The data come from the RNA Mapping Database (RMDB), library M2PK90. This 177-nucleotide RNA was probed chemically with 2A3 and DMS. The RNA was probed in 150 mM KOAc, 10 mM MgCl2 and 150 mM bicine (pH 8.5) at 24 C. The DMS profile rests on 1,426 reads. DMS adducts were read by reverse transcription with MarathonRT. For 2A3, 955 sequencing reads were counted.
RNA sequence: GGGAACGACUCGAGUAGAGUCGAAAAAAAUUAUGGUCGCCGGCACGUAUGUGCACACCGAGAAUGACACUGUUUCGCCGUCAACCGUGUCGGUAGUCUUGCACAUCAGGAAUCCGUCUGCGUUGAAAUGUAUCGUGGGAUUCGUCCCACGAUACAUAAAAGAAACAACAACAACAAC
Reactivity to 2A3 in 0.01 (KOAc 150mM, MgCl2 10mM, bicine 150mM(pH8.5), 24C), signal-to-noise 1, nucleotides 027 to 126: a000a000a000u300u170a180u160g010g000u000c030g000c010c010g020g000c020a010c060g010u170a050u160g050u010g000c060a020c000a000c010c020g060a050g130a190a100u160g040a050c020a000c050u010g020u140u100u130c090g030c060c000g040u070c010a020a000c030c000g020u050g030u030c000g020g030u030a040g010u010c010u010u040g040c010a010c010a100u070c030a010g060g100a070a030u040c030c020g050u060c080u040g010c010g040u070u070g030a240a220
Reactivity to DMS in 0.01 (KOAc 150mM, MgCl2 10mM, bicine 150mM(pH8.5), 24C), signal-to-noise 2, nucleotides 027 to 126: a030a050a060u020u010a090u010g010g010u000c050g000c020c020g000g000c080a070c040g010u000a020u020g020u000g030c020a060c190a040c070c040g000a130g010a100a120u010g010a040c040a050c050u000g000u000u000u000c080g000c040c030g020u020c060a050a030c090c060g000u010g000u000c000g020g020u010a050g000u010c110u000u020g000c000a060c050a070u010c050a060g000g000a100a100u000c030c050g000u000c030u000g010c090g000u000u010g000a100a040